[RMDB]
RNA sequence: GGGAACGACUCGAGUAGAGUCGAAAAGGACUUAGGUUCGCCUAAGUCCAAAUAACGUCUACAAGUACGGUAGACGAAGAUAACGUACACUACAGAAGUACAAAAGGAGAGACUUCGGUCUCUCCAACCAUAAAAUCUGGUUCGCCAGAUUUUAUGGAAAAGAAACAACAACAACAAC
Reactivity to 2A3 in 0.01 (KOAc 150mM, MgCl2 10mM, bicine 150mM(pH8.5), 24C), signal-to-noise 5, nucleotides 027 to 126: g010g000a000c010u010u000a000g030g010u060u060c170g070c030c000u000a010a000g000u000c000c010a000a000a000u010a010a000c000g010u000c000u010a010c020a080a160g130u050a070c090g050g000u010a020g010a010c040g020a020a010g040a030u160a110a040c110g040u080a020c100a020c080u240a050c060a100g170a300a040g110u010a030c020a010a110a030a030g000g000a000g000a000g000a010c010u030u050c250g080g000u000c000u000c000u000c000c000a010a000
Reactivity to DMS in 0.01 (KOAc 150mM, MgCl2 10mM, bicine 150mM(pH8.5), 24C), signal-to-noise 3, nucleotides 027 to 126: g010g010a000c010u000u010a000g010g010u010u010c270g040c000c000u000a000a010g010u000c010c000a000a050a040u000a090a130c030g010u000c020u000a000c000a040a110g020u010a020c100g010g020u000a010g020a030c020g020a070a070g030a100u000a090a060c190g000u020a070c110a100c090u020a110c150a110g000a120a110g010u000a020c040a060a060a130a090g000g000a000g020a010g010a020c000u000u020c250g010g010u000c000u010c000u000c000c010a000a030

Structure probing data (2A3 and DMS) for a 177-nucleotide construct.
The RNA was probed in 150 mM KOAc, 10 mM MgCl2 and 150 mM bicine (pH 8.5) at 24 C.